[RMDB]
RNA sequence: GGGAACGACUCGAGUAGAGUCGAAAAUGAUACAAAUAAGAAGGUACGGUACCCUUGUCCACCAUCUCCUCCAAUUCGUGCUCUAUUUUAUCAUUAACUUUAAUGUAGGAGAACAGUACGCCGCAUGUAGGCAUGCAAAGUUCGCUUUGCAUGCCUAAAAAGAAACAACAACAACAAC
Reactivity to 2A3 in 0.01 (KOAc 150mM, MgCl2 10mM, bicine 150mM(pH8.5), 24C), signal-to-noise 4, nucleotides 027 to 126: u090g000a020u050a080c100a050a110a020u210a080a110g110a030a030g070g010u070a030c050g040g030u110a100c040c000c000u050u050g040u030c010c000a020c010c020a110u040c010u020c030c010u000c000c020a070a110u130u040c020g000u030g010c000u040c010u050a060u010u040u030u020a160u170c080a080u040u090a080a200c070u190u090u220a020a020u090g020u040a100g000g020a030g010a040a000c000a020g030u020a050c030g020c050c000g080c020a010u160g020
Reactivity to DMS in 0.01 (KOAc 150mM, MgCl2 10mM, bicine 150mM(pH8.5), 24C), signal-to-noise 2, nucleotides 027 to 126: u050g000a230u000a070c190a010a010a020u010a090a100g010a140a090g010g020u010a010c040g000g000u000a050c040c020c030u000u000g000u000c100c100a070c010c040a020u000c040u010c020c030u000c020c040a090a120u010u010c010g000u000g000c000u000c020u010a070u000u000u000u020a050u020c000a030u000u000a010a070c120u010u020u060a050a000u000g010u000a040g020g000a070g000a020a170c210a050g010u000a080c130g000c090c030g000c090a060u000g040